[RMDB]
RNA sequence: GGGAACGACUCGAGUAGAGUCGAAAACGUCUUCAUGUCGCGGCCCGUAAGGUGCAGUGCGUUGAUAAGGCCCGCAGCCGCGAUGAUGGCCGUGCCAUGCUGGUCGUCGUGGAAGACGGGAAUGUCAGCCCUCAUUACCUUUCGAGGUAAUGAGGGCAAAAGAAACAACAACAACAAC
Reactivity to 2A3 in 0.01 (KOAc 150mM, MgCl2 10mM, bicine 150mM(pH8.5), 24C), signal-to-noise 2, nucleotides 027 to 126: c010g030u000c010u020u010c040a060u200g020u070c000g010c000g050g000c110c000c000g000u010a080a090g030g010u180g120c040a030g010u050g110c020g100u080u000g060a190u020a150a040g030g000c000c060c010g020c060a010g050c000c010g000c030g070a040u130g000a020u030g030g020c010c010g000u010g000c000c050a110u150g000c020u030g060g010u010c000g040u010c010g040u060g140g080a020a000g010a000c020g020g030g040a180a110u180g030u120c060a020
Reactivity to DMS in 0.01 (KOAc 150mM, MgCl2 10mM, bicine 150mM(pH8.5), 24C), signal-to-noise 2, nucleotides 027 to 126: c010g030u000c000u010u000c000a070u040g010u000c020g010c010g040g020c030c080c160g000u020a090a110g030g000u020g020c030a050g040u000g010c040g020u000u000g000a110u030a110a150g050g000c020c010c090g010c130a200g000c010c010g000c040g020a030u010g020a050u020g010g000c010c020g000u000g010c030c100a090u000g020c050u010g020g030u000c010g060u000c010g020u010g000g010a040a020g000a040c020g010g000g000a080a040u010g000u010c080a190